Notes
Source: RMDB library M2RFPK, as collected in RNAgym. Chemical mapping of a 207-nucleotide RNA with DMS. DMS adducts were read by reverse transcription with MarathonRT. The DMS profile rests on 1,779 reads.

[RMDB]
RNA sequence: GGGAACGACUCGAGUAGAGUCGAAAAGUUCCCUCUUAGCGUGGAGGUUUAACUACGCUCGUUCCCCAUAUCGGUGUGGGCGCACCGGAUUUAUAAAUCAAAGUCCUUUAGGGAACGGAAAGAAACAAAAAUCCAUGGGAGUUCGCUCCCAUGGAAAGAUUUGACACAAGUUCGCUUGUGUCAAAUCAAAAGAAACAACAACAACAAC
Reactivity to DMS in 0.01 (KOAc 150mM, MgCl2 10mM, bicine 150mM(pH8.5), 24C), signal-to-noise 1, nucleotides 027 to 156: g000u010u000c000c000c010u020c050u000u010a050g000c040g020u000g040g010a150g020g030u000u010u010a060a160c030u000a010c020g080c030u000c030g060u000u020c020c020c010c050a300u000a040u000c000g010g030u000g010u000g070g030g000c080g000c040a010c000c010g010g000a150u000u010u010a080u000a090a070a100u020c030a060a080a080g000u010c010c010u000u000u000a090g040g000g030a010a060c020g010g000a110a100a090g000a180a180a200c040a050a160a160a070a160u000c000c030a010u030g000g020g000a080g050u000u000c300g040c060u000c010c000c000a030u000g000g000a000a010a050